[RMDB]
RNA sequence: GGGAACGACUCGAGUAGAGUCGAAAACUCCGUUUCGACGGAGCCAUGCAGUCAACGGUACCGGAGGCGGUCUGUGCCGAGGAUAAGGAGUUGACGGCUAAACCACUACCACGCAAUUUCGAUUGCGGUAAAGCCAGAGGUUCGCCUCUGGCUUUACAAAAGAAACAACAACAACAAC
Reactivity to DMS in 0.01 (KOAc 150mM, MgCl2 10mM, bicine 150mM(pH8.5), 24C), signal-to-noise 1, nucleotides 027 to 126: c000u000c000c000g040u000u040u000c120g050a050c020g030g000a010g000c110c100a220u000g000c030a080g030u000c000a000a010c010g000g020u000a020c020c010g000g010a300g000g000c010g010g020u010c200u030g000u010g010c020c000g000a300g000g000a060u000a080a070g010g010a180g000u000u000g020a020c010g000g000c000u000a040a090a180c000c040a000c230u040a120c100c120a300c000g040c000a040a010u000u100u000c070g010a030u000u000g000c040g000
The record gives the reactivity of an RNA of 177 nucleotides to DMS.
It was measured as part of the RMDB library RFMREP.
The DMS profile rests on 662 reads.
For DMS the reverse transcriptase was MarathonRT.
The reactions ran in a buffer of 150 mM KOAc, 10 mM MgCl2 and 150 mM bicine (pH 8.5), at 24 C.